[RMDB]
Chemical mapping of a 207-nucleotide RNA with DMS and 2A3. For 2A3 the reverse transcriptase was SuperScript II with manganese.
RNA sequence: GGGAACGACUCGAGUAGAGUCGAAAAACGGUGCGGAAGUUCGCGCUUCCGUGAAACGCGAAAAUCGGACGGUGGCUGCAAGUCGCAUCGCACAACCGCGGCAAGUGGAGUUAGCGAGAGGAGGCUGAAACCAUCCAACACUUCGGUGUUGGAUGAACCAUAGAACUCAGUUCGCUGAGUUCUAUGGAAAAGAAACAACAACAACAAC
Reactivity to DMS in 0.01 (KOAc 150mM, MgCl2 10mM, bicine 150mM(pH8.5), 24C), signal-to-noise 3, nucleotides 027 to 156: a030c000g010g020u000g020c020g000g000a040a080g020u010u000c170g020c200g020c010u000u000c010c110g030u000g010a030a050a040c030g000c010g020a080a030a100a110u000c040g020g000a050c030g010g030u000g010g040c020u000g030c050a050a080g010u000c030g010c010a140u000c050g010c030a120c040a080a090c030c000g000c050g000g030c080a070a140g000u000g000g000a120g020u000u000a100g010c020g010a050g010a080g030g000a040g010g020c040u010g010a080a080a130c120c010a050u010c000c000a010a020c000a010c000u000u010c300g050g010u000g000u000u000g000g000a010u010g010a030a080
Reactivity to 2A3 in 0.01 (KOAc 150mM, MgCl2 10mM, bicine 150mM(pH8.5), 24C), signal-to-noise 7, nucleotides 027 to 156: a000c040g030g020u060g000c010g010g020a040a030g050u080u140c050g010c020g010c060u020u010c000c010g020u020g030a100a080a010c110g010c020g070a060a040a000a080u110c030g000g020a010c020g020g030u030g040g000c050u080g020c070a060a050g020u030c020g010c030a030u050c020g030c020a050c010a050a060c040c050g000c010g010g020c050a080a050g020u050g050g030a060g020u070u080a030g040c040g040a020g000a020g060g030a010g010g010c030u040g030a070a020a020c030c000a000u000c000c000a000a000c000a000c000u030u080c230g100g000u010g000u000u000g000g000a000u000g000a000a010